[RMDB]
RNA sequence: GGGAACGACUCGAGUAGAGUCGAAAACGGCUUGCGUUCGCGCAAGCCGAAAGCGUACUACUCUUCGCGUGACUGCGACGACGUUAUCCCAAAUAGGAUAACAUCAGCAGCACGAACUACGAAGAGUAUCGCAAAUCUUCACUGUUCGCAGUGAAGAGAGGAUGCUGAGAUUCGUCUCAGCAUCCUCAAAAGAAACAACAACAACAAC
Reactivity to 2A3 in 0.01 (KOAc 150mM, MgCl2 10mM, bicine 150mM(pH8.5), 24C), signal-to-noise 2, nucleotides 027 to 156: c000g000g000c000u000u050g000c000g020u020u060c260g020c030g000c050a010a000g000c000c000g000a020a000a000g000c000g000u030a030c050u010a000c000u040c000u000u010c010g000c000g100u060g280a300c000u000g000c020g270a270c070g010a010c040g060u000u010a020u010c010c040c060a210a210a020u300a040g000g000a000u010a000a000c000a020u050c000a020g010c000a000g000c000a000c000g000a030a010c050u230a030c080g000a000a000g000a020g000u000a000u000c020g000c000a150a030a110u000c000u000u020c000a000c000u000g120u050u100c300g030c120a000g000u020g000a000a000g010a010

Structure probing data (2A3) for a 207-nucleotide construct. Source: RMDB library RNAMAK, as collected in RNAgym. For 2A3, 1,282 sequencing reads were counted. Conditions: 150 mM KOAc, 10 mM MgCl2 and 150 mM bicine (pH 8.5), 24 C.